[RMDB]
RNA sequence: GGGAACGACUCGAGUAGAGUCGAAAAGAAAGAAGCUCCCUGCAGACAAUUUAUUGCAGCCUUCUCAGGGUGGCCCCCUGCUCUGUUCACCAGGGGGAAGGUGUAAUAAAUUGCCUGCGGGGAGGAAAUAGACUUAUCGAUUCGUCGAUAAGUCUAUAAAAGAAACAACAACAACAAC
Reactivity to DMS in 0.01 (KOAc 150mM, MgCl2 10mM, bicine 150mM(pH8.5), 24C), signal-to-noise 2, nucleotides 027 to 126: g000a140a100a130g010a170a190g030c000u000c000c000c010u000g000c000a000g010a040c000a000a010u020u000u000a000u000u000g000c000a010g010c010c000u010u000c000u010c030a110g020g000g010u000g010g000c060c010c020c050c060u020g010c040u000c050u010g000u020u010c050a010c070c000a040g030g020g020g000g010a000a000g000g020u000g000u010a000a010u000a010a000a000u000u000g010c020c000u000g000c000g010g010g010g010a000g000g010a010a070
Reactivity to 2A3 in 0.01 (KOAc 150mM, MgCl2 10mM, bicine 150mM(pH8.5), 24C), signal-to-noise 5, nucleotides 027 to 126: g120a010a120a010g070a060a040g080c000u000c000c000c010u010g000c000a000g010a020c000a000a000u000u000u000a000u000u010g000c000a090g300c000c000u020u010c030u010c010a020g030g050g050u070g060g010c000c020c000c000c010u020g020c020u020c020u050g110u180u190c060a060c110c010a060g090g030g000g010g020a000a000g000g000u010g000u000a000a000u000a000a000a000u000u000g000c000c000u000g000c000g000g000g000g000a000g000g000a010a010
The record gives the reactivity of an RNA of 177 nucleotides to DMS and 2A3. The RNA was probed in 150 mM KOAc, 10 mM MgCl2 and 150 mM bicine (pH 8.5) at 24 C. The data come from the RNA Mapping Database (RMDB), library RFM100. 2A3 adducts were read by reverse transcription with SuperScript II with manganese. For DMS the reverse transcriptase was MarathonRT.